[RMDB]
RNA sequence: GGGAACGACUCGAGUAGAGUCGAAAAGCGAUGCGCAUGCGCGGCCAUGAUCAGCGCCGGCCUGCGCGCGAUCGACGUGAUCCAGCGCUACGAUCAGACUGAUGGCCGAUCAGUACGAUGAUCAUGCUCAUGUCGUGACUUUCGAGUCACGACAUGAAAAAGAAACAACAACAACAAC
Reactivity to 2A3 in 0.01 (KOAc 150mM, MgCl2 10mM, bicine 150mM(pH8.5), 24C), signal-to-noise 3, nucleotides 027 to 126: g010c010g080a080u120g020c010g000c020a020u060g030c300g030c030g060g000c000c020a100u230g050a170u140c070a030g020c040g000c110c000g040g010c000c020u060g000c000g000c000g000c020g000a010u040c000g120a160c070g040u060g010a020u000c050c050a060g020c010g020c050u060a050c100g030a020u030c020a020g030a090c000u080g040a050u070g120g060c060c030g010a040u020c010a010g030u060a070c060g070a100u090g000a000u030c010a010u100g010c010
Reactivity to DMS in 0.01 (KOAc 150mM, MgCl2 10mM, bicine 150mM(pH8.5), 24C), signal-to-noise 3, nucleotides 027 to 126: g010c030g020a060u000g010c040g020c020a040u010g000c030g010c020g020g000c040c040a120u020g000a090u010c130a080g060c110g030c030c010g000g010c040c030u000g020c040g020c000g000c160g000a030u000c030g000a210c060g010u000g000a050u000c060c110a140g010c030g010c080u000a070c060g010a010u000c000a080g030a110c050u010g000a070u020g000g010c040c050g000a110u010c050a070g010u000a060c070g010a070u000g000a030u000c020a000u000g010c120